RNA sequence: GGGAACGACUCGAGUAGAGUCGAAAAAAACUUUUGUGACUUGCUGAAACGGGACUAAUCUCCUCACCGAGGCUAAGCAAGUAAAACACGCCUCUCAUAUCCUUACCUGAGGGUGGUAAGGAAAUAACCUGCAACGCUUCCUUCGGGAAGCGUUGAAUCACUAACGAUAGUUCGCUAUCGUUAGUGAAAAAGAAACAACAACAACAAC
Reactivity to 2A3 in 0.01 (KOAc 150mM, MgCl2 10mM, bicine 150mM(pH8.5), 24C), signal-to-noise 3, nucleotides 027 to 156: a000a000a000c110u140u100u050u120g070u060g050a030c000u010u010g010c010u050g030a040a090a080c040g020g000g030a020c030u070a110a060u040c030u020c050c020u070c040a070c030c080g020a000g050g000c040u050a040a000g000c000a040a010g040u100a030a040a010a050c060a010c050g020c020c010u010c000u010c010a030u040a060u240c000c000u010u000a000c000c010u040g060a100g010g100g020u050g010g000u000a000a000g000g030a000a020a000u030a000a010c020c050u090g000c010a000a000c000g000c000u000u020c010c000u020u030c150g010g000g000a000a000g000c000g000u000u000g000a000a000
Reactivity to DMS in 0.01 (KOAc 150mM, MgCl2 10mM, bicine 150mM(pH8.5), 24C), signal-to-noise 2, nucleotides 027 to 156: a050a040a050c030u010u010u000u000g030u030g000a160c030u000u000g030c010u020g020a090a070a100c120g000g020g030a070c070u010a130a100u000c070u000c020c010u000c100a140c070c060g010a070g000g030c030u000a190a060g010c020a000a030g000u010a040a050a040a080c060a070c050g000c040c010u000c020u000c080a110u000a120u000c020c000u010u000a020c020c010u000g020a110g020g000g030u020g000g030u010a010a030g000g000a000a030a070u000a070a080c040c060u010g010c010a020a010c000g020c000u000u010c000c000u020u000c300g000g000g000a000a000g040c020g000u000u000g000a040a080